This 177-nucleotide RNA was probed chemically with DMS and 2A3. For 2A3 the reverse transcriptase was SuperScript II with manganese. For DMS the reverse transcriptase was MarathonRT.
RNA sequence: GGGAACGACUCGAGUAGAGUCGAAAACUGGAGGGAUAGGGUCAAGAAGAGUGUGUGAGAGCAGUAAUUUCCCAAGACUGCCCUCUGCGGGACUGUAUUUCAGAAAACAUACUGGUGGGGCUACCUCAGAUGCGUAACCAUUCGUGGUUACGCAUCUAAAAGAAACAACAACAACAAC
Reactivity to DMS in 0.01 (KOAc 150mM, MgCl2 10mM, bicine 150mM(pH8.5), 24C), signal-to-noise 1, nucleotides 027 to 126: c120u000g010g000a290g000g000g010a170u010a080g010g000g020u010c110a050a080g000a090a080g000a110g010u000g020u000g010u010g010a030g010a030g000c000a010g000u020a050a080u000u000u000c000c000c050a160a140g010a050c020u000g000c020c030c000u000c010u010g020c110g020g000g010a140c080u000g010u010a050u010u020u000c080a100g000a100a050a060a140c090a030u000a060c110u000g010g000u000g050g000g000g000c090u000a030c070c050u010c170
Reactivity to 2A3 in 0.01 (KOAc 150mM, MgCl2 10mM, bicine 150mM(pH8.5), 24C), signal-to-noise 1, nucleotides 027 to 126: c030u060g030g020a090g070g010g000a030u170a070g070g050g030u070c120a070a000g160a070a020g050a060g000u110g010u090g010u070g120a010g000a000g000c000a000g000u040a050a100u050u030u000c020c010c000a000a030g070a000c010u000g000c010c000c000u050c040u040g000c070g040g000g020a050c060u020g020u040a100u010u070u170c040a040g050a130a220a030a000c070a000u160a020c000u010g000g070u120g000g060g060g040c020u160a090c000c000u000c010